[RMDB]
RNA sequence: GGGAACGACUCGAGUAGAGUCGAAAAGCGCUUUUUACGUCCGGCGAUGACUUCACUCUCCAGCAAAGUGAAUGCAAUCCUGCUGGCGUCCAUGUACCAGCAAACGCCAAACGUGGUGGGCACGUGGGGCACGGUCCCCAGUACGCGCACCCCGUGGCACCAAUCCCUUCUUCGGAAGGGAUUGGUGAAAAGAAACAACAACAACAAC
Reactivity to 2A3 in 0.01 (KOAc 150mM, MgCl2 10mM, bicine 150mM(pH8.5), 24C), signal-to-noise 2, nucleotides 027 to 156: g050c020g050c110u100u040u010u080u180a060c050g030u100c010c030g070g030c020g020a020u060g030a060c040u010u000c020a000c000u050c020u050c080c070a090g050c060a230a100a000g020u050g010a030a070u090g010c050a000a130u050c080c010u090g010c000u020g020g000c000g020u010c030c000a080u090g030u130a120c000c000a000g020c000a010a100a070c080g010c020c000a040a090a080c040g020u020g030g000u000g000g080g000c020a020c150g140u050g000g000g000g020c140a070c300g180g170u300c000c000c000c000a000g020u030a020c100g000c020g020c000a020c000c010c000c020g020u000g030g010